[RMDB]
Chemical mapping of a 177-nucleotide RNA with DMS.
RNA sequence: GGGAACGACUCGAGUAGAGUCGAAAAGCAUGAGUGAGCUUACACUCAUGUGAGCACUGUUAGUCCAAACAGUGCUGAGUCUAGUGUAAGCUCACUGGACUGACUAGUGUUUGGACUAACACUGGUAGGACUGCAUUCUAUUCGUAGAAUGCAGUCCAAAAGAAACAACAACAACAAC
Reactivity to DMS in 0.01 (KOAc 150mM, MgCl2 10mM, bicine 150mM(pH8.5), 24C), signal-to-noise 1, nucleotides 027 to 126: g020c130a110u010g000a020g010u000g010a050g010c080u000u000a020c000a010c000u000c300a040u010g030u000g000a110g010c020a010c060u000g000u000u000a020g010u000c030c050a040a030a000c000a000g020u000g000c020u000g000a050g000u000c070u000a010g020u000g010u000a040a040g000c060u000c000a000c000u000g010g000a110c100u000g000a030c010u000a020g030u000g000u000u000u000g000g000a010c010u000a000a020c010a010c010u000g000g010u010a070
The RNA was probed in 150 mM KOAc, 10 mM MgCl2 and 150 mM bicine (pH 8.5) at 24 C. The DMS profile rests on 1,454 reads. The data come from the RNA Mapping Database (RMDB), library OK2TRN.